[RMDB]
RNA sequence: GGGAACGACUCGAGUAGAGUCGAAAAUAGCUGACGUUCGCGUCAGCUAAAAGCACCAAAACCUCCUGGCGGUGCGGCGCCGGCCGCGCCGGGAAGGCCGCCAACUCGAUGGGUUCGCCCAUCGAAAACUAUCAAUGUACUUCGGUACAUUGAUAGUAAAAGAAACAACAACAACAAC
Reactivity to DMS in 0.01 (KOAc 150mM, MgCl2 10mM, bicine 150mM(pH8.5), 24C), signal-to-noise 5, nucleotides 027 to 126: u000a010g010c000u000g010a020c000g020u000u020c220g030c010g020u000c000a000g000c000u000a010a010a070a140g010c160a170c030c030a080a060a100a270c060c030u000c050c040u000g010g010c010g010g010u000g020c000g020g000c020g020c070c120g010g020c250c110g020c020g010c000c010g010g000g010a110a120g010g000c030c020g010c020c030a050a090c150u000c000g010a010u000g000g010g010u000u010c180g010c000c000c000a010u000c000g000a010a030a080
Reactivity to 2A3 in 0.01 (KOAc 150mM, MgCl2 10mM, bicine 150mM(pH8.5), 24C), signal-to-noise 2, nucleotides 027 to 126: u030a000g010c000u000g000a010c000g020u030u050c280g020c000g110u020c000a000g010c000u000a000a000a000a000g000c010a070c050c000a030a060a070a140c010c030u060c010c030u030g020g000c010g010g030u050g120c020g000g000c030g010c040c080g150g040c070c030g020c020g000c030c010g000g020g000a030a020g220g000c000c000g000c000c000a020a080c030u010c010g000a000u000g030g000g000u030u040c210g070c020c010c010a000u000c000g000a000a000a000